[RMDB]
RNA sequence: GGGAACGACUCGAGUAGAGUCGAAAACGCAACUUGAACCGCACAACAGGCCCUCUGCAGCAAACGGCGCCAGCGUUCGACCCAAUUGCGACAGGUGGCAGCGAGGCUGAGAUGUCAUACAAGCGCCGGAUUUACUGAUAUUCGUAUCAGUAAAUCCAAAAGAAACAACAACAACAAC
Reactivity to DMS in 0.01 (KOAc 150mM, MgCl2 10mM, bicine 150mM(pH8.5), 24C), signal-to-noise 7, nucleotides 027 to 126: c080g010c080a100a060c080u010u010g000a120a100c080c050g010c050a070c080a080a090c110a110g000g010c010c030c020u000c030u000g010c100a060g020c060a040a070a130c120g020g000c040g010c030c050a040g010c050g010u000u000c050g020a130c050c020c030a060a140u010u010g010c050g010a090c070a060g010g030u000g000g010c040a050g000c050g010a080g010g010c040u000g010a080g010a080u010g000u000c040a060u000a080c100a090a110g020c050g010c070c110
Reactivity to 2A3 in 0.01 (KOAc 150mM, MgCl2 10mM, bicine 150mM(pH8.5), 24C), signal-to-noise 4, nucleotides 027 to 126: c020g000c030a030a050c040u050u100g030a070a040c040c020g020c010a030c020a120a120c010a060g050g030c000c000c010u040c020u070g010c000a050g000c000a080a060a080c040g030g010c020g020c020c010a010g000c010g060u050u060c040g050a090c000c000c000a060a120u110u130g030c030g020a030c030a050g060g050u020g050g000c010a020g030c010g040a020g040g010c020u010g010a040g010a100u090g030u050c030a030u080a190c040a080a080g020c040g050c070c040